[RMDB]
RNA sequence: GGGAACGACUCGAGUAGAGUCGAAAAGGCCUAGUACACAGUGCGCAGUACAUGGCCGAUCCAUAUGAUCACACAGGCCGAGUACCAUCGAUGAUCAGGCCGUACGGCCCAGCGCGCGGCCUAGGCCUGCGACCAUCCAUUUCGAUGGAUGGUCGCAAAAAGAAACAACAACAACAAC
Reactivity to 2A3 in 0.01 (KOAc 150mM, MgCl2 10mM, bicine 150mM(pH8.5), 24C), signal-to-noise 2, nucleotides 027 to 126: g000g000c000c000u000a020g030u120a020c080a020c060a070g020u000g100c000g030c000a020g030u040a000c040a110u110g010g000c010c030g000a000u000c020c000a050u080a100u300g010a020u010c030a020c020a010c020a180g000g000c010c020g090a050g050u110a120c030c010a120u090c090g170a190u110g020a040u070c040a020g030g020c060c020g020u170a070c070g000g000c000c000c030a040g030c030g000c010g040c000g020g000c000c010u010a020g010g030c000c000
Reactivity to DMS in 0.01 (KOAc 150mM, MgCl2 10mM, bicine 150mM(pH8.5), 24C), signal-to-noise 3, nucleotides 027 to 126: g030g010c020c000u000a160g000u000a070c120a150c020a180g070u000g000c030g050c050a280g000u000a040c090a160u010g010g050c000c000g000a040u000c040c240a130u010a070u020g000a000u000c030a100c120a100c300a160g000g010c000c020g000a120g040u020a040c010c070a040u010c090g000a100u020g000a040u000c160a070g010g000c050c050g000u000a040c110g020g010c000c010c030a100g020c040g020c030g020c030g020g000c300c000u010a030g010g010c000c000

Structure probing data (2A3 and DMS) for a 177-nucleotide construct. The reactions ran in a buffer of 150 mM KOAc, 10 mM MgCl2 and 150 mM bicine (pH 8.5), at 24 C. Source: RMDB library OK2TRN, as collected in RNAgym.